[RMDB]
RNA sequence: GGGAACGACUCGAGUAGAGUCGAAAAUUAAAUUCACCAAUUAAAGACUUGAUAAGGGAAGAUUUACCAGCACCAUUCGGGCCCAUGAUACCAAUUAUUUCGCCGCGUACUGGUAUCGAUAAGGAAAGUUGGGGAGAUGAUUCGUCAUCUCCCCAACAAAAGAAACAACAACAACAAC
Reactivity to 2A3 in 0.01 (KOAc 150mM, MgCl2 10mM, bicine 150mM(pH8.5), 24C), signal-to-noise 2, nucleotides 027 to 126: u130u020a070a000a050u240u050c120a130c080c030a000a000u070u220a140a190a000g010a000c000u050u100g010a000u130a120a030g090g030g000a200a000g020a110u000u090u060a070c030c010a000g160c120a000c000c000a020u240u000c030g030g070g010c000c090c000a020u170g000a000u080a040c010c020a000a050u200u000a140u060u180u060c040g000c230c000g040c020g070u070a060c000u000g010g000u050a040u100c030g000a060u060a180a000g100g000a180a000a000
Reactivity to DMS in 0.01 (KOAc 150mM, MgCl2 10mM, bicine 150mM(pH8.5), 24C), signal-to-noise 2, nucleotides 027 to 126: u010u010a140a110a150u000u010c110a140c080c000a000a170u010u020a120a040a150g000a080c050u050u000g020a080u110a120a160g020g020g000a030a100g020a100u010u010u040a040c000c010a020g000c070a020c120c010a050u080u000c180g000g010g000c000c000c080a020u010g000a000u000a050c070c040a000a080u000u000a100u020u000u050c070g030c040c000g010c100g000u000a030c210u000g010g000u000a010u000c020g000a020u010a090a050g000g020a120a030a170
The record gives the reactivity of an RNA of 177 nucleotides to 2A3 and DMS. It was measured as part of the RMDB library OK1LIB. For DMS, 1,725 sequencing reads were counted. Values cover nucleotides 27 to 126. For 2A3, 943 sequencing reads were counted. The RNA was probed in 150 mM KOAc, 10 mM MgCl2 and 150 mM bicine (pH 8.5) at 24 C. Values are in units of 0.01, from 0 to 300, in steps of 10.